[RMDB]
RNA sequence: GGGAACGACUCGAGUAGAGUCGAAAAUAGAGUUGAUGGGAAACCAUUAAUAGUAACCGUAGAGUUUCCUACAGUACCAUUAGCAAUACUUGCAACUCCACUUCCAUUAACAACUACUCCACCUGCAUCUCCUCUUCUGAUUCGUCAGAAGAGGAGAAAAAGAAACAACAACAACAAC
Reactivity to DMS in 0.01 (KOAc 150mM, MgCl2 10mM, bicine 150mM(pH8.5), 24C), signal-to-noise 2, nucleotides 027 to 126: u010a110g000a170g000u000u000g000a030u010g000g000g000a110a060a190c050c030a020u000u000a010a050u000a150g010u000a060a060c060c020g010u000a040g000a150g020u000u000u000c030c040u020a030c030a060g000u020a100c050c030a060u010u000a020g010c030a010a030u000a080c160u020u000g000c030a040a040c040u000c010c080a060c080u010u010c040c050a060u000u010a040a060c090a060a100c060u000a050c110u010c060c070a040c090c070u000g020c060a120
Reactivity to 2A3 in 0.01 (KOAc 150mM, MgCl2 10mM, bicine 150mM(pH8.5), 24C), signal-to-noise 1, nucleotides 027 to 126: u100a020g050a000g040u010u060g000a060u060g000g030g010a030a030a020c030c030a020u070u110a050a030u050a060g090u010a060a080c000c040g010u040a060g020a000g040u010u090u040c000c010u000a020c010a010g040u050a040c020c010a060u050u060a010g030c020a010a080u020a280c080u060u080g000c010a030a040c020u000c020c040a040c080u070u040c000c000a040u040u060a000a080c040a000a000c010u060a030c030u030c030c010a060c030c000u030g070c000a080

Conditions: 150 mM KOAc, 10 mM MgCl2 and 150 mM bicine (pH 8.5), 24 C.
This 177-nucleotide RNA was probed chemically with DMS and 2A3.
For DMS, 1,040 sequencing reads were counted.